[RMDB]
RNA sequence: GGGAACGACUCGAGUAGAGUCGAAAACUAUAAAAUAUACACAGCAGUGAGGGCAUGGGUGCUAAGGUCCAUGUCCGAGAGGGAAAGAACCCAGACCAUCAUCUAAGGUCCCUAAAUCUAUGCUAAGUAUUUCCCAUUCGUUCGCGAAUGGGAAAUAAAAAGAAACAACAACAACAAC
Reactivity to DMS in 0.01 (KOAc 150mM, MgCl2 10mM, bicine 150mM(pH8.5), 24C), signal-to-noise 2, nucleotides 027 to 126: c070u000a130u060a080a060a050a110u010a070u030a280c130a050c110a030g000c030a070g020u020g000a150g000g000g030c000a000u000g040g000g000u000g000c150u020a060a080g010g000u000c000c000a000u000g000u010c000c000g020a080g000a090g000g010g040a060a080a110g000a100a030c060c000c000a070g020a060c060c030a130u020c070a130u000c060u000a130a080g000g000u000c000c020c020u030a030a050a090u030c010u030a030u020g000c030u000a090a070g030
Reactivity to 2A3 in 0.01 (KOAc 150mM, MgCl2 10mM, bicine 150mM(pH8.5), 24C), signal-to-noise 3, nucleotides 027 to 126: c000u040a000u180a220a100a060a030u300a020u070a000c080a000c000a050g060c000a000g030u040g060a110g010g000g000c000a000u010g000g070g000u080g080c120u130a170a040g180g000u000c000c000a000u000g000u000c000c000g000a000g040a000g000g010g030a000a110a240g120a030a070c010c000c000a010g000a010c020c020a030u070c000a040u020c020u080a100a060g010g000u050c000c010c000u080a100a070a020u080c040u040a070u110g040c030u030a020a020g070
About this RNA
Conditions: 150 mM KOAc, 10 mM MgCl2 and 150 mM bicine (pH 8.5), 24 C. Chemical mapping of a 177-nucleotide RNA with DMS and 2A3. The 2A3 profile rests on 1,179 reads.